[RMDB]
RNA sequence: GGGAACGACUCGAGUAGAGUCGAAAACGUCGUGAACUAGCGACAAUGCGGUAGCUCCAUCGUUAUCUAACCGAAACAUCGUGACUAGUCGUAGAAUAGAACCAGGAGAGGACGCUGGCAAACAAAGACGGGGUGUCUGGUUCGCCGGACGCCCCGUAAAAGAAACAACAACAACAAC
Reactivity to DMS in 0.01 (KOAc 150mM, MgCl2 10mM, bicine 150mM(pH8.5), 24C), signal-to-noise 3, nucleotides 027 to 126: c080g040u010c010g020u000g010a070a070c100u010a180g000c030g000a050c010a090a080u010g010c030g000g020u010a050g000c030u000c010c010a020u000c070g000u010u000a050u010c030u010a110a120c050c030g000a060a060a070c060a040u020c070g010u000g010a060c060u000a030g000u010c070g030u010a060g020a040a060u000a040g000a070a060c030c070a080g000g000a080g000a070g010g010a040c050g000c010u000g000g000c150a040a060a060c080a040a080a110g000
Reactivity to 2A3 in 0.01 (KOAc 150mM, MgCl2 10mM, bicine 150mM(pH8.5), 24C), signal-to-noise 2, nucleotides 027 to 126: c050g030u000c000g000u030g060a080a090c030u040a010g010c010g010a000c000a000a030u090g010c010g000g030u020a010g000c000u000c020c010a080u070c040g020u000u100a070u070c000u020a000a140c000c020g040a040a020a010c090a040u140c010g030u020g030a030c000u000a010g020u050c000g040u020a020g000a070a020u010a020g070a010a010c020c000a000g000g000a040g020a010g020g000a000c030g000c010u000g020g000c000a000a030a110c050a000a170a000g020
Chemical mapping of a 177-nucleotide RNA with DMS and 2A3. The data come from the RNA Mapping Database (RMDB), library OK1LIB. Conditions: 150 mM KOAc, 10 mM MgCl2 and 150 mM bicine (pH 8.5), 24 C. For 2A3, 1,847 sequencing reads were counted.